[RMDB]
Overview: Structure probing data (2A3) for a 207-nucleotide construct. It was measured as part of the RMDB library RSTRND. The reactions ran in a buffer of 150 mM KOAc, 10 mM MgCl2 and 150 mM bicine (pH 8.5), at 24 C.
RNA sequence: GGGAACGACUCGAGUAGAGUCGAAAAGUGGUUUGAAGCAUCGGCUAAACACACAGUCUAGCCAAGCUAUAUUGCUUGGAUAUAGUUUGGUAAAAACUUAAUCAAGCUAGCUUUUAUGCCCUGCUCUUCGGGUGAUAAAAGUUAAAAAUAAUAGAAUGUUUAAUAGCAAGUUCGCUUGCUAUUAAACAAAAGAAACAACAACAACAAC
Reactivity to 2A3 in 0.01 (KOAc 150mM, MgCl2 10mM, bicine 150mM(pH8.5), 24C), signal-to-noise 2, nucleotides 027 to 156: g040u030g050g070u040u130u200g140a120a020g000c050a110u180c160g150g000c070u060a050a110a000c090a000c000a000c010a140g030u000c050u050a030g020c020c000a000a000g010c000u000a000u010a000u010u150g000c010u000u010g000g000a000u000a000u000a000g010u030u000u010g000g040u090a110a090a040a080a070c060u140u150a070a020u170c010a000a000g000c000u010a010g000c000u000u000u000u040a010u010g020c000c000c030u050g040c040u050c010u180u180c120g010g000g000u050g270a010u010a010a000a000a000g000u010u010a060a070a030a000a000u150a050a020u080a090g030a140a030u050
About this RNA: Values cover nucleotides 27 to 156.